[RMDB]
RNA sequence: GGGAACGACUCGAGUAGAGUCGAAAAGUUCGUCCCGCUGGGAGUCAACGCGGCCUUUCCCCGCUAUGCUCUGGAGGACGUCGAACUCGGCGGCGUGCUGAUCCGGGAGGGGGAACCGGUGCUGGCCAGCCUGGCCUCGGCGAACCGGGACGAGUCGUAAACCCGGUAAGUUCGCUUACCGGGUUUAAAAAGAAACAACAACAACAAC
Reactivity to 2A3 in 0.01 (KOAc 150mM, MgCl2 10mM, bicine 150mM(pH8.5), 24C), signal-to-noise 1, nucleotides 027 to 156: g000u070u010c000g000u050c000c000c000g030c060u030g030g000g150a170g050u070c020a040a060c080g000c000g040g000c000c070u020u050u000c000c000c010c000g000c090u140a130u260g050c000u040c050u110g060g000a040g060g020a010c010g020u000c000g040a110a100c030u040c140g060g060c020g000g000c000g000u080g100c060u100g060a030u000c000c010g010g020g040a060g000g000g000g000g060a010a010c060c050g060g010u100g090c100u020g010g050c000c020a050g030c100c020u030g020g010c000c040u020c010g020g010c020g080a090a040c080c060g000g010g000a020c000g000a000g000u020c030g020